The data come from the RNA Mapping Database (RMDB), library OK1LIB. An RNA of 177 nucleotides, treated with 2A3 and DMS and read out base by base. The 2A3 profile rests on 3,227 reads.

[RMDB]
RNA sequence: GGGAACGACUCGAGUAGAGUCGAAAACGAGCUUGCAGUCACUAAAAUUUUUAAACAUCACCCCCACAACGUGCGUAAAGGGUGCGUACGUGCUGCGGCUAACGAAACCAGUGGUGUCCACCCAAAAUAUUUUAGGGAGGUUCGCCUCCCUAAAAUAAAAAGAAACAACAACAACAAC
Reactivity to 2A3 in 0.01 (KOAc 150mM, MgCl2 10mM, bicine 150mM(pH8.5), 24C), signal-to-noise 6, nucleotides 027 to 126: c030g010a010g030c030u170u300g000c100a040g040u130c050a080c170u130a080a120a230a300u130u110u070u130u290a110a110a030c040a030u090c020a040c000c020c020c020c000a070c050a060a100c030g030u030g010c010g010u050a110a130a150g040g000g000u050g000c020g010u030a000c030g000u010g000c000u010g000c000g010g000c000u020a070a000c010g070a070a000a010c020c030a040g010u020g070g020u040g040u000c030c010a020c000c010c000a000a100a010a070
Reactivity to DMS in 0.01 (KOAc 150mM, MgCl2 10mM, bicine 150mM(pH8.5), 24C), signal-to-noise 3, nucleotides 027 to 126: c100g000a070g020c020u000u030g040c030a020g020u010c130a100c120u030a020a030a060a030u010u010u060u060u020a040a090a110c100a090u000c040a050c010c000c010c030c040a080c180a110a020c050g010u020g000c040g000u000a040a090a170g000g000g010u020g010c050g020u000a030c060g000u000g000c010u000g030c050g000g010c000u000a060a060c110g000a080a100a130c070c050a080g000u000g000g020u000g010u010c020c030a120c030c000c020a000a090a100a170
Conditions: 150 mM KOAc, 10 mM MgCl2 and 150 mM bicine (pH 8.5), 24 C. For DMS the reverse transcriptase was MarathonRT.